An RNA of 177 nucleotides, treated with DMS and read out base by base. For DMS, 892 sequencing reads were counted. Reactivities are rounded to 0.1 and cut off at 0 and 3. In probing experiments dimethyl sulfate is read out at A N1 and C N3, which are open when not base-paired.
RNA sequence: GGGAACGACUCGAGUAGAGUCGAAAAUUCGCGCGGCGGGGUGAAACCGCUGAUCACCGAGCGCGUGCCGUGCGACCACAUCAUGGCGUCCUCGGCCCCGGUGCCGCCGAACGUGUCGCGAACGAACACAAGUUGAUAGCUUCGGCUAUCAACUUGUAAAAGAAACAACAACAACAAC
Reactivity to DMS in 0.01 (KOAc 150mM, MgCl2 10mM, bicine 150mM(pH8.5), 24C), signal-to-noise 1, nucleotides 027 to 126: u000u000c030g030c000g010c000g000g000c010g010g000g000g000u000g020a090a160a090c020c060g010c010u010g020a060u010c160a180c020c040g000a060g000c080g010c110g060u010g020c020c020g000u000g000c090g000a090c100c060a090c120a040u000c080a100u000g000g010c080g000u000c090c060u000c000g000g010c040c020c020c010g000g040u000g000c070c010g000c020c050g000a040a130c150g000u000g010u020c020g000c030g000a060a050c090g020a210a130c130
DMS adducts were read by reverse transcription with MarathonRT. It was measured as part of the RMDB library OK2TRN. Conditions: 150 mM KOAc, 10 mM MgCl2 and 150 mM bicine (pH 8.5), 24 C.